[RMDB]
RNA sequence: GGGAACGACUCGAGUAGAGUCGAAAAAAAAGAUAUGGAUCCUCGAGAGCGAAGAACUAUACUGAACUUAUGUCGGAAACGACAUAUCAAUAAGUAUAGGGAGCUCGAGAGGAUCCUAAGUCAAAAACCAAGGAAAUAAGUUCGCUUAUUUCCUUGGAAAAGAAACAACAACAACAAC
Reactivity to DMS in 0.01 (KOAc 150mM, MgCl2 10mM, bicine 150mM(pH8.5), 24C), signal-to-noise 2, nucleotides 027 to 126: a080a030a090a090g020a010u000a010u000g000g000a010u000c000c000u010c000g000a300g030a030g030c040g010a100a140g000a190a230c010u000a000u000a000c020u000g000a140a160c090u000u000a000u000g020u000c000g000g000a020a010a030c000g030a000c000a000u000a000u000c010a030a030u000a270a190g010u010a000u000a010g010g020g000a010g010c000u010c000g000a300g000a010g000g000a000u000c000c000u000a000a030g000u000c000a080a050a070a070a160